[RMDB]
RNA sequence: GGGAACGACUCGAGUAGAGUCGAAAACUUUAGGUGCUUUAUUACGUGAUUUAAACAAUUCAUAUAAAGCUUGCGUAGAUUGAAUUCUACUUAGCAUUAGCGUUUGUUUAUAUUCCGGUGUCCAUCGCUCCGUACUCUCCUUCGGGAGAGUACGGAGAAAAGAAACAACAACAACAAC
Reactivity to 2A3 in 0.01 (KOAc 150mM, MgCl2 10mM, bicine 150mM(pH8.5), 24C), signal-to-noise 2, nucleotides 027 to 126: c000u170u040u220a140g000g080u130g000c030u140u270u000a160u260u130a040c030g020u240g040a050u000u130u190a020a030a000c030a000a000u130u040c070a000u240a000u070a300a070a000g000c000u030u110g010c030g040u000a000g020a070u030u100g130a080a300u220u030c000u000a000c000u000u060a000g000c000a190u000u080a110g050c110g020u000u000u040g010u000u000u000a140u030a060u070u000c060c000g010g080u100g130u030c110c070a040u080c060g000
About this RNA: Conditions: 150 mM KOAc, 10 mM MgCl2 and 150 mM bicine (pH 8.5), 24 C. Structure probing data (2A3) for a 177-nucleotide construct. Values cover nucleotides 27 to 126. The 2A3 profile rests on 446 reads. Source: RMDB library OK1LIB, as collected in RNAgym.